An RNA of 207 nucleotides, treated with 2A3 and read out base by base. It was measured as part of the RMDB library OK3TST. 2A3 adducts were read by reverse transcription with SuperScript II with manganese.
RNA sequence: GGGAACGACUCGAGUAGAGUCGAAAAAAGUAGAUAUCCUUUUUCAUCCGAUCAUUGAUGAAAAUACGAACUUUAUUCGGUAAGACGAUCAUUUACUAAGGAGUAAAAUAGGAAGUAACGUUCGUAUAUCGUUAUCGUCGUAUAAAUUAAAGGUGUGCAUCCGUCAGUUCUUCGGAACUGACGGAUGAAAAGAAACAACAACAACAAC
Reactivity to 2A3 in 0.01 (KOAc 150mM, MgCl2 10mM, bicine 150mM(pH8.5), 24C), signal-to-noise 2, nucleotides 027 to 156: a010a010g170u250a040g010a080u050a080u190c030c000u080u000u000u000u000c020a010u000c020c040g200a190u090c170a170u180u050g000a000u020g040a000a030a000a000u040a000c010g060a120a080c010u000u040u070a090u080u170c040g060g020u050a190a040g080a010c010g000a000u000c040a110u010u140u000a050c050u090a050a090g170g070a090g160u180a020a070a050a110u180a040g070g170a060a010g010u030a020a020c080g000u010u010c030g010u020a000u010a000u060c090g010u020u030a010u000c000g040u010c010g000u050a030u020a100a160a040u080u160a090a030a090g100g040u140g010u100g040